[RMDB]
RNA sequence: GGGAACGACUCGAGUAGAGUCGAAAAGCUCUGUAAUGGGAUGGGAUCCGAAGCCCCAUUGAGGGAUAAUACAGGCUCUCCCAUCCAACUCCUAUUCCAACACGUCCUCGUCGUAAAGAGUGGUAACUAAGGUAUAGCUCCUUCGGGAGCUAUACAAGGAUUAACGGUUGUUCGCAACCGUUAAUCCAAAAGAAACAACAACAACAAC
Reactivity to 2A3 in 0.01 (KOAc 150mM, MgCl2 10mM, bicine 150mM(pH8.5), 24C), signal-to-noise 1, nucleotides 027 to 156: g040c020u010c080u110g080u050a090a200u110g120g000g000a000u010g000g000g010a030u250c030c030g040a010a010g000c010c000c000c060a180u140u180g080a300g000g000g000a000u080a280a040u140a260c110a060g000g000c010u000c000u010c010c000c000a000u040c000c000a000a020c020u000c000c000u030a080u040u030c000c000a110a000c000a000c070g040u050c030c000u020c060g110u020c000g010u040a040a060a000g040a060g010u010g010g010u050a060a080c110u050a160a000g120g000u010a000u000a000g000c000u010c000c000u000u000c000g060g010g020a000g000c000u000a000u000a010c020a000a000